[RMDB]
RNA sequence: GGGAACGACUCGAGUAGAGUCGAAAAGUUCAUCUCAUUCGCAAUAGUUUGCGCCAUGUGCCUUGGAAGGAAAGUCGAGCCGUAGCUGCAGACCUCAAGCCCAUUUAUCAAGCGGCCACUUUGGAGGUCCUUCUAAGUCGUUCGCGACUUAGAAGGAAAAAGAAACAACAACAACAAC
Reactivity to DMS in 0.01 (KOAc 150mM, MgCl2 10mM, bicine 150mM(pH8.5), 24C), signal-to-noise 2, nucleotides 027 to 126: g000u000u000c070a080u000c030u010c000a130u010u040c070g010c010a040a040u000a100g030u000u000u000g030c070g010c140c010a060u020g030u010g000c070c040u020u000g020g050a120a090g010g020a090a100a140g000u000c050g030a100g020c000c040g010u010a060g010c010u000g000c060a080g010a060c020c020u000c090a040a160g020c030c020c000a060u000u000u000a050u010c160a100a070g010c050g030g030c030c080a080c110u000u010u000g020g010a050g000g000
Reactivity to 2A3 in 0.01 (KOAc 150mM, MgCl2 10mM, bicine 150mM(pH8.5), 24C), signal-to-noise 1, nucleotides 027 to 126: g010u080u150c000a090u050c040u030c030a120u160u170c030g010c080a090a060u100a230g120u020u030u030g090c050g060c020c010a050u080g000u010g040c000c140u020u110g130g010a050a030g010g020a050a010a000g070u080c040g040a030g100c040c010g090u080a010g000c080u080g000c020a020g100a180c010c000u030c030a000a040g000c020c020c020a080u110u120u040a200u140c110a170a030g030c000g130g000c010c060a030c030u080u110u080g110g030a040g050g020